[RMDB]
RNA sequence: GGGAACGACUCGAGUAGAGUCGAAAAAGUUUCCAAUUCGUUGGAAACUACUGUCGGAAUGCGGAAUAUAAAAUCCUCCGCUUAAGGAUUUUUCCGACUUAAAGUACACUAGUUUCGACUAGUGUAACUUGAUUAAUUCUUUCGAGAAUUAAUCAAGAAAAGAAACAACAACAACAAC
Reactivity to DMS in 0.01 (KOAc 150mM, MgCl2 10mM, bicine 150mM(pH8.5), 24C), signal-to-noise 4, nucleotides 027 to 126: a300g010u000u000u000c010c000a010a020u000u010c160g010u010u000g000g000a020a010a010c010u000a040c060u000g010u000c000g000g000a030a040u010g010c010g010g000a050a040u010a080u010a080a070a160a140u010c260c050u000c020c010g010c030u000u010a060a080g010g000a100u010u010u000u010u000c000c000g010a020c000u010u000a040a060a100g000u000a000c000a010c000u000a000g010u010u000u010c170g000a020c000u000a000g010u000g000u000a010a050
Reactivity to 2A3 in 0.01 (KOAc 150mM, MgCl2 10mM, bicine 150mM(pH8.5), 24C), signal-to-noise 2, nucleotides 027 to 126: a000g000u000u000u000c000c000a000a020u080u050c140g040u020u010g000g000a000a010a000c000u030a050c020u050g010u010c000g000g020a030a030u070g010c010g000g040a070a000u140a050u070a100a150a060a060u050c010c020u000c000c000g090c020u020u040a050a030g070g000a050u100u120u010u100u000c000c000g000a000c000u020u120a120a020a000g070u010a000c000a000c000u000a000g000u020u080u090c220g040a010c010u000a000g010u010g010u010a000a020